About this RNA
This 177-nucleotide RNA was probed chemically with DMS.

RNA sequence: GGGAACGACUCGAGUAGAGUCGAAAAGAUAUGGACAUCCUCACGGGAGCGUGGGAGUCGGAAACGACUCUCACGCUUUGAUCGUGACAUGGAUGUCCUAAGUCAAAGCGAGACUUCGGUCUCGCAAGCGAGAAGAUCACUUCGGUGAUCUUCUCGCAAAAGAAACAACAACAACAAC
Reactivity to DMS in 0.01 (KOAc 150mM, MgCl2 10mM, bicine 150mM(pH8.5), 24C), signal-to-noise 1, nucleotides 027 to 126: g000a010u060a300u020g000g000a020c010a020u000c000c040u000c000a030c030g000g000g000a010g010c030g060u010g000g000g030a010g000u000c000g040g000a140a160a150c000g000a000c020u000c010u000c000a000c000g020c000u010u000u000g000a050u000c000g000u000g000a140c300a150u090g000g000a000u000g000u000c000c000u000a000a100g010u000c070a060a110a210g010c010g010a000g010a020c010u000u020c270g050g000u010c000u000c000g030c000a000a020
The reactions ran in a buffer of 150 mM KOAc, 10 mM MgCl2 and 150 mM bicine (pH 8.5), at 24 C.